[RMDB]
An RNA of 177 nucleotides, treated with 2A3 and DMS and read out base by base.
Reactivities are given for positions 27 through 126.
For 2A3, 763 sequencing reads were counted.
For 2A3 the reverse transcriptase was SuperScript II with manganese.
The reactions ran in a buffer of 150 mM KOAc, 10 mM MgCl2 and 150 mM bicine (pH 8.5), at 24 C.
RNA sequence: GGGAACGACUCGAGUAGAGUCGAAAAAGUUGACCGCGUGGCCGCGAGCGAGGUGAACCUUGUCGGUGAUCUGAACAAGCUCCGCCAUGCCCGCGAGUCUAGGAGCGAGCGCGAGCGCGGCAAGCCGUCACACAACCGUCUUCGGACGGUUGUGUGAAAAAGAAACAACAACAACAAC
Reactivity to 2A3 in 0.01 (KOAc 150mM, MgCl2 10mM, bicine 150mM(pH8.5), 24C), signal-to-noise 2, nucleotides 027 to 126: a010g140u090u040g070a100c000c020g000c020g110u220g100g000c060c050g000c050g000a020g090c000g070a130g060g000u000g020a010a040c000c000u080u090g180u130c100g000g020u110g010a040u050c010u020g120a020a000c040a150a000g000c040u050c000c000g030c000c000a010u060g000c000c000c000g020c030g040a020g040u000c090u110a100g100g000a040g030c040g020a050g140c070g020c000g010a040g020c040g000c030g020g000c000a010a000g030c040c070g030
Reactivity to DMS in 0.01 (KOAc 150mM, MgCl2 10mM, bicine 150mM(pH8.5), 24C), signal-to-noise 1, nucleotides 027 to 126: a110g010u020u010g000a220c080c060g000c000g080u060g000g070c010c000g060c010g000a170g050c000g000a070g000g050u000g000a030a050c210c010u000u120g000u030c050g000g010u030g030a140u050c080u000g000a150a240c120a090a140g000c030u020c040c010g000c000c100a070u030g000c000c000c000g000c000g010a120g070u030c100u060a080g000g000a080g000c130g000a090g000c090g000c030g000a220g000c080g020c100g000g030c010a010a110g010c070c080g000